[RMDB]
RNA sequence: GGGAACGACUCGAGUAGAGUCGAAAAAUAACCGGCAGCACCGUUGCCCAAAAUCUUUGGAAUUCCGGUCAUGGUAGCACUGUCACGGUGAGCUGUACCAAAAGCAUCACUGAUGUAAACAUCACCAGGCUCCACUACCGUUCGCGGUAGUGGAGCCAAAAGAAACAACAACAACAAC
Reactivity to 2A3 in 0.01 (KOAc 150mM, MgCl2 10mM, bicine 150mM(pH8.5), 24C), signal-to-noise 1, nucleotides 027 to 126: a000u120a090a040c020c010g000g000c000a000g000c010a000c010c000g060u100u070g010c000c000c020a000a220a000a000u030c050u080u140u040g070g100a050a040u150u030c000c000g000g010u000c020a000u070g000g060u020a060g030c030a000c170u040g000u010c130a040c080g000g000u050g000a010g000c000u000g030u090a050c030c040a030a300a000a000g000c010a120u020c000a000c060u100g000a000u010g020u060a000a220a120c000a040u030c000a000c060c000a010